RNA sequence: GGGAACGACUCGAGUAGAGUCGAAAAUCGCCGUUCGCGGCGAGAACGAUCCUAAGUCCGACACUAUCCUCUUGUCAGCUAUCAUAUCGGAAACGAUAUGUAGCUUGGAUUUAGAGGACGAAUGUCGGAUAUGGAGCUACAGCGGUUUCGACCGCAACCACUGGCCAGUUUUCGAACUGGCCAGUGGAAAAGAAACAACAACAACAAC
Reactivity to 2A3 in 0.01 (KOAc 150mM, MgCl2 10mM, bicine 150mM(pH8.5), 24C), signal-to-noise 1, nucleotides 027 to 156: u000c000g000c000c000g000u000u070c300g030c020g200g030c080g000a000g000a040a020c020g020a030u030c000c140u060a100a060g020u050c000c000g000a000c010a040c050u010a070u060c000c000u040c000u000u000g010u000c000a010g000c000u030a010u300c000a000u010a000u000c040g060g050a040a020a030c000g000a000u000a000u010g010u000a000g010c000u000u030g060g000a000u000u250u080a010g000a010g010g040a000c010g000a120a250u070g010u010c000g050g000a000u000a000u000g000g000a020g030c100u170a100c030a180g030c040g000g000u000u130u240c190g160a100c000c000g000c040a000a000